[RMDB]
The record gives the reactivity of an RNA of 177 nucleotides to DMS and 2A3. The 2A3 profile rests on 5,810 reads. The reactions ran in a buffer of 150 mM KOAc, 10 mM MgCl2 and 150 mM bicine (pH 8.5), at 24 C. The data come from the RNA Mapping Database (RMDB), library OK2TST. For DMS the reverse transcriptase was MarathonRT.
RNA sequence: GGGAACGACUCGAGUAGAGUCGAAAAGCUGACGGCUCAAUGCUGGGGAAAUGGUUCAAUAAGGAAAUCCAGGCGCGUAACGGCGAAAAAAAUCUUCAGUUGUGGAAAGCCUAUCAUGAUUUGCCGGCCUACGUUAUACUUUCGAGUAUAACGUAGGAAAAGAAACAACAACAACAAC
Reactivity to DMS in 0.01 (KOAc 150mM, MgCl2 10mM, bicine 150mM(pH8.5), 24C), signal-to-noise 7, nucleotides 027 to 126: g010c060u000g020a090c300g010g000c020u000c050a110a090u000g010c030u000g010g000g000g000a040a070a080u010g010g010u000u000c060a080a100u010a130a130g020g000a040a040a070u010c010c040a060g010g010c020g000c030g010u010a090a110c300g000g000c010g000a000a000a020a100a070a080a090u000c020u000u000c030a040g010u000u000g020u000g010g010a090a070a070g010c020c010u010a170u010c060a050u010g000a080u000u000u000g010c020c010g010g000
Reactivity to 2A3 in 0.01 (KOAc 150mM, MgCl2 10mM, bicine 150mM(pH8.5), 24C), signal-to-noise 4, nucleotides 027 to 126: g030c050u020g030a020c040g050g000c010u010c060a040a060u110g010c010u010g010g000g010g020a020a060a070u050g040g030u070u060c070a080a070u220a240a080g160g010a040a040a000u050c010c010a010g040g020c050g000c000g060u010a050a020c020g030g010c000g000a090a000a010a010a020a020a030u000c000u030u000c020a040g010u070u060g080u100g090g040a140a060a020g010c010c010u030a070u070c030a030u080g090a090u050u050u110g080c020c020g040g040